[RMDB]
This 177-nucleotide RNA was probed chemically with DMS.
RNA sequence: GGGAACGACUCGAGUAGAGUCGAAAAGCAUACUUGCAGAUAUGACCCACGGAGUCCAGUACAUGAACGAGGUAAUGGAGCUUCUGAUAGACGGAUUCGAGGAAGCGAUAAAGGACGGCCCAUUGGCUAUGGAAGUGCUGUUCGCAGCACUUCCAUAAAAAGAAACAACAACAACAAC
Reactivity to DMS in 0.01 (KOAc 150mM, MgCl2 10mM, bicine 150mM(pH8.5), 24C), signal-to-noise 2, nucleotides 027 to 126: g000c010a020u000a090c100u000u000g010c060a110g020a220u000a080u000g000a130c030c000c000a160c110g010g020a110g000u000c020c050a060g000u000a060c040a070u020g020a060a110c170g020a110g010g000u000a010a080u000g020g000a090g020c050u010u000c020u000g030a160u010a210g010a060c160g020g010a140u020u010c040g000a120g000g000a080a100g010c000g020a180u010a060a150a040g040g010a020c060g010g000c010c010c080a170u020u000g020g030c190